[RMDB]
RNA sequence: GGGAACGACUCGAGUAGAGUCGAAAAACAUAUUACGAUAUGAUUCAGAUGGUGUCUUACUGGUACGUACCAAGGGACAUAAUGGUUUCUUGUUUCCAACCAAAGAACAAGUGGCGAGCCUGAAUAAAAAACUGACUGCCGUUCGCGGCAGUCAGAACAUUUAUCUUGCGUUCGCGCAAGAUAAAUGAAAAGAAACAACAACAACAAC
Reactivity to 2A3 in 0.01 (KOAc 150mM, MgCl2 10mM, bicine 150mM(pH8.5), 24C), signal-to-noise 3, nucleotides 027 to 156: a000c040a020u150a020u080u150a080c110g070a040u030a020u120g060a070u060u110c080a070g110a180u140g090g010u010g010u020c030u050u070a110c030u030g000g000u070a100c090g070u100a020c050c000a020a020g030g010g000a000c000a010u130a050a120u070g020g000u020u010u010c000u000u010g000u020u030u000c020c030a060a100c040c010a070a090a030g010a010a010c010a020a010g020u010g060g010c020g010a010g030c010c040u030g050a060a040u140a100a100a010a010a010a030c000u000g000a000c000u000g000c020c000g010u050u040c210g000c000g100g000c020a000g000u000c000a000g000a000a000
Reactivity to DMS in 0.01 (KOAc 150mM, MgCl2 10mM, bicine 150mM(pH8.5), 24C), signal-to-noise 1, nucleotides 027 to 156: a110c030a040u000a020u000u000a110c080g020a070u010a090u010g000a090u000u010c050a170g010a160u000g020g100u000g000u010c040u000u000a050c090u010g070g000u000a180c250g040u000a120c040c000a120a100g000g010g020a070c010a020u000a020a170u000g000g020u000u000u010c020u000u010g000u000u010u000c000c030a100a080c060c070a030a190a110g020a110a090c010a050a090g020u000g000g020c020g000a140g020c030c010u000g000a020a030u000a000a010a050a050a030a120c000u010g000a010c000u010g040c020c000g090u000u010c240g050c060g050g000c000a000g000u020c000a010g010a020a040
An RNA of 207 nucleotides, treated with 2A3 and DMS and read out base by base.
The reactions ran in a buffer of 150 mM KOAc, 10 mM MgCl2 and 150 mM bicine (pH 8.5), at 24 C.
The data come from the RNA Mapping Database (RMDB), library M2RFPK.
Reactivities are given for positions 27 through 156.